[RMDB]
RNA sequence: GGGAACGACUCGAGUAGAGUCGAAAAGACAGUGCCUGCCUGUGGGAACGGCACUACUCAAGGCUGCCAGUCUGUCUGUGUCUUCAGCGUGGGCCCUCUUCACCUCCCAGGGCAGUCCGGGGCAUUCACUACAAGAUUCCUUCGGGAAUCUUGUAGUAAAAGAAACAACAACAACAAC
Reactivity to DMS in 0.01 (KOAc 150mM, MgCl2 10mM, bicine 150mM(pH8.5), 24C), signal-to-noise 4, nucleotides 027 to 126: g000a080c100a020g030u000g030c060c020u000g020c050c000u010g020u000g000g010g020a120a130c190g010g020c020a050c020u000a040c060u000c050a080a070g030g000c040u000g010c060c040a110g020u000c090u000g000u000c030u000g010u000g010u000c030u000u000c070a070g000c070g040u000g010g010g000c030c030c040u010c020u000u000c080a110c080c050u000c020c020c010a160g000g010g000c040a060g020u000c030c050g000g000g000g000c180a090u000u000c090
Reactivity to 2A3 in 0.01 (KOAc 150mM, MgCl2 10mM, bicine 150mM(pH8.5), 24C), signal-to-noise 2, nucleotides 027 to 126: g070a020c060a040g040u030g130c000c010u040g010c000c000u180g000u170g100g060g040a070a090c050g000g010c020a010c040u050a040c050u060c030a000a060g080g000c030u060g070c030c030a030g060u030c020u050g110u030c030u100g060u040g020u060c000u060u030c040a010g020c020g090u070g000g030g020c000c020c020u050c010u030u040c030a050c050c010u000c020c010c010a000g030g000g000c040a020g000u030c010c060g040g000g000g020c020a030u130u110c040